The record gives the reactivity of an RNA of 177 nucleotides to 2A3 and DMS. For 2A3 the reverse transcriptase was SuperScript II with manganese.
RNA sequence: GGGAACGACUCGAGUAGAGUCGAAAACUAGGAUCAGCGAUCUGAUCGACGUACCGUACGACAUGGUACUGGAUCGUACUGCGUACUGAUCGUCGGAUCCUCGACUAGCUAGGAUCGAUGAUCGCUAUCUCCAUCUGGCAUUCGUGCCAGAUGGAGAAAAAGAAACAACAACAACAAC
Reactivity to 2A3 in 0.01 (KOAc 150mM, MgCl2 10mM, bicine 150mM(pH8.5), 24C), signal-to-noise 3, nucleotides 027 to 126: c020u050a090g030g100a050u100c050a050g030c040g010a040u000c000u020g050a180u060c010g030a020c030g000u030a150c020c020g010u020a010c040g090a050c070a180u250g090g000u050a020c030u070g190g090a160u180c070g010u010a000c020u060g000c020g020u000a030c010u040g050a180u100c020g010u000c000g060g000a010u000c000c030u040c020g130a140c140u210a040g070c050u030a020g010g000a000u020c020g050a070u130g000a010u070c050g020c030u020a050
Reactivity to DMS in 0.01 (KOAc 150mM, MgCl2 10mM, bicine 150mM(pH8.5), 24C), signal-to-noise 2, nucleotides 027 to 126: c050u000a060g000g020a060u000c120a040g020c030g000a010u000c000u020g000a100u020c000g010a050c030g020u010a060c060c190g000u000a000c030g000a130c100a080u000g000g010u000a020c040u000g020g030a120u000c280g000u010a010c000u000g010c020g010u000a010c020u050g010a230u000c020g020u000c010g000g000a040u010c040c040u000c060g000a170c070u000a040g020c160u000a060g010g000a000u000c000g020a110u000g010a030u000c000g020c020u000a100
For DMS, 1,406 sequencing reads were counted. The reactions ran in a buffer of 150 mM KOAc, 10 mM MgCl2 and 150 mM bicine (pH 8.5), at 24 C.